[RMDB]
RNA sequence: GGGAACGACUCGAGUAGAGUCGAAAAGAGGAAGCCACACAGGGGUUUGCAGAGAAAUCACCUCCAGAGGACCCCUUCAGCGAACAGAACGAUCGCUUCACGCGGUGGGAGCAAGACCAUAGCGAUAGAUAUGCAAGAACUUCGGUUCUUGCAUAUCAAAAGAAACAACAACAACAAC
Reactivity to DMS in 0.01 (KOAc 150mM, MgCl2 10mM, bicine 150mM(pH8.5), 24C), signal-to-noise 1, nucleotides 027 to 126: g000a060g010g010a140a150g000c080c040a020c110a130c130a160g000g000g000g010u010u000u010g000c300a150g000a040g040a080a070a100u000c110a150c060c010u000c000c110a150g010a110g000g050a110c060c010c000c020u000u000c070a060g000c000g010a080a090c040a030g020a040a090c130g000a070u000c080g000c040u000u010c120a040c080g040c080g030g000u000g000g000g000a130g050c140a020a040g000a090c090c010a030u010a080g000c020g000a070u000a090